[RMDB]
RNA sequence: GGGAACGACUCGAGUAGAGUCGAAAAGAUAUGGAUCCACAUGACAUGCUCUGUCGGAAACGACUGAGCAACAGCAUGGGAUCCUAAGUCAAAGACACUCUAGCAUGUUCGCAUGCUAGAGUGUCAACCUUAUCGUUAGCUUCGGCUAACGAUAAGGAAAAGAAACAACAACAACAAC
Reactivity to DMS in 0.01 (KOAc 150mM, MgCl2 10mM, bicine 150mM(pH8.5), 24C), signal-to-noise 3, nucleotides 027 to 126: g000a060u000a300u010g000g010a000u010c000c000a050c020a010u000g010a030c060a240u000g000c000u010c000u000g000u000c000g030g010a080a080a120c010g010a010c000u010g000a010g020c000a010a020c120a090g000c000a000u000g010g010g010a010u000c000c000u000a010a060g000u000c050a090a110a130g000a010c000a010c000u000c000u000a010g010c000a000u000g000u000u030c250g010c010a010u000g000c010u000a000g000a010g010u010g000u000c000a030a020
Reactivity to 2A3 in 0.01 (KOAc 150mM, MgCl2 10mM, bicine 150mM(pH8.5), 24C), signal-to-noise 4, nucleotides 027 to 126: g020a010u070a040u130g000g000a000u030c000c000a230c020a300u020g070a150c040a120u040g000c000u000c020u040g000u000c010g010g010a070a070a030c020g000a000c010u020g010a000g010c020a020a010c050a000g040c000a000u010g000g000g000a010u000c000c000u000a060a010g020u010c030a150a080a030g000a000c000a000c000u020c010u000a000g000c010a000u010g040u110u090c300g010c230a010u000g000c010u020a010g010a000g000u000g000u000c000a000a000